RNA sequence: GGGAACGACUCGAGUAGAGUCGAAAAACGGUCGUACGCGACCGAGGCGCGGCUAGGUCGACGGACCGAACAAUGGCAUCCCGCAUUCUGCCAUCCGCCGCGCAGCUUCUUCUCAAACGGAGCGGAAAAAAGUAGGACACCUUCGGGUGUCCUACAACAUCCAAAUAGCGUUCGCGCUAUUUGGAUGAAAAGAAACAACAACAACAAC
Reactivity to 2A3 in 0.01 (KOAc 150mM, MgCl2 10mM, bicine 150mM(pH8.5), 24C), signal-to-noise 4, nucleotides 027 to 156: a000c010g000g000u000c010g020u050a040c210g010c010g140a000c010c000g000a070g020g000c000g000c000g000g010c010u010a010g000g000u000c020g110a170c210g200g010a000c000c000g000a000a010c020a000a000u000g000g000c000a030u110c040c020c000g010c020a110u160u040c030u050g010c000c000a000u010c010c040g000c000c010g000c000g000c000a010g000c000u100u050c010u090u020c030u030c050a080a060a050c100g030g000a000g000c040g020g000a080a050a020a010a020a020g000u000a000g010g010a000c000a000c010c020u040u100c240g040g000g010u000g000u010c000c000u000a000c000a000a000
Reactivity to DMS in 0.01 (KOAc 150mM, MgCl2 10mM, bicine 150mM(pH8.5), 24C), signal-to-noise 2, nucleotides 027 to 156: a110c000g000g000u000c000g020u020a070c170g010c020g010a020c000c010g020a030g000g000c040g050c010g030g000c000u000a150g000g040u000c000g000a210c300g000g000a060c030c020g020a120a060c300a120a060u000g010g020c030a130u010c060c000c030g060c100a130u000u000c040u010g010c040c000a060u000c020c080g000c010c000g000c010g000c010a000g000c020u000u010c050u010u000c060u000c060a080a130a080c150g030g000a070g030c000g010g000a000a060a080a090a110a130g030u010a030g020g000a020c010a000c000c010u000u010c260g070g040g050u020g010u000c000c000u000a010c010a030a100